[RMDB]
Structure probing data (2A3) for a 177-nucleotide construct. The data come from the RNA Mapping Database (RMDB), library OK1LIB. Conditions: 150 mM KOAc, 10 mM MgCl2 and 150 mM bicine (pH 8.5), 24 C.
RNA sequence: GGGAACGACUCGAGUAGAGUCGAAAAGGUUCGAGCCCUGUUGGUCCCACCAUUUGCGGCCUGGUAGUUCAGUUGGUUAGAAUGCCAGCCUGUCACGCUGGAGGUCGAGGGUUCGAACCCCUUCCAGGCGUACUCGACGUUUCGACGUCGAGUACGCAAAAGAAACAACAACAACAAC
Reactivity to 2A3 in 0.01 (KOAc 150mM, MgCl2 10mM, bicine 150mM(pH8.5), 24C), signal-to-noise 3, nucleotides 027 to 126: g020g010u030u030c010g000a010g000c000c060c030u090g090u060u120g070g050u110c080c030c000a070c050c000a090u030u090u200g000c020g000g040c010c000u030g000g040u120a290g160u000u040c020a010g010u060u090g150g100u100u210a060g080a140a050u140g040c000c010a000g100c020c030u090g060u090c020a020c090g040c040u040g050g120a040g030g010u010c000g020a000g000g000g000u000u000c000g010a000a000c020c000c010c020u010u040c000c000a010g000